[RMDB]
RNA sequence: GGGAACGACUCGAGUAGAGUCGAAAAUAUUUAUUGAUACAGAGAUUUGAUAUGUAUUAGAUGUGGAUAUAGAUUAGAUCUUGCUUGCUAUAGAUCACUCACUUGGCAAUCCAGAGCACAUGGGCUUGGAAACAUCUGUCCAUACAGAGUGGAUUCACAUCCCCUCGGUAUUCGUACCGAGGGGAUGAAAAGAAACAACAACAACAAC
Reactivity to 2A3 in 0.01 (KOAc 150mM, MgCl2 10mM, bicine 150mM(pH8.5), 24C), signal-to-noise 1, nucleotides 027 to 156: u100a070u080u100u100a040u000u090g020a010u010a050c020a040g060a030g010a250u140u260u290g020a070u120a090u190g010u020a070u010u060a100g090a150u160g010u010g040g000a030u080a000u030a070g050a070u190u040a040g110a160u000c000u010u050g040c020u070u000g010c000u070a020u040a170g020a080u070c000a030c000u000c000a070c000u020u120g040g000c030a010a000u030c060c040a010g000a000g070c040a030c000a200u130g050g000g000c000u000u040g000g000a070a090a000c000a050u070c060u170g020u000c040c000a050u050a030c020a030g040a010g000u040g000g020a030u050u000c030a020
Chemical mapping of a 207-nucleotide RNA with 2A3. For 2A3 the reverse transcriptase was SuperScript II with manganese. Reactivities are given for positions 27 through 156.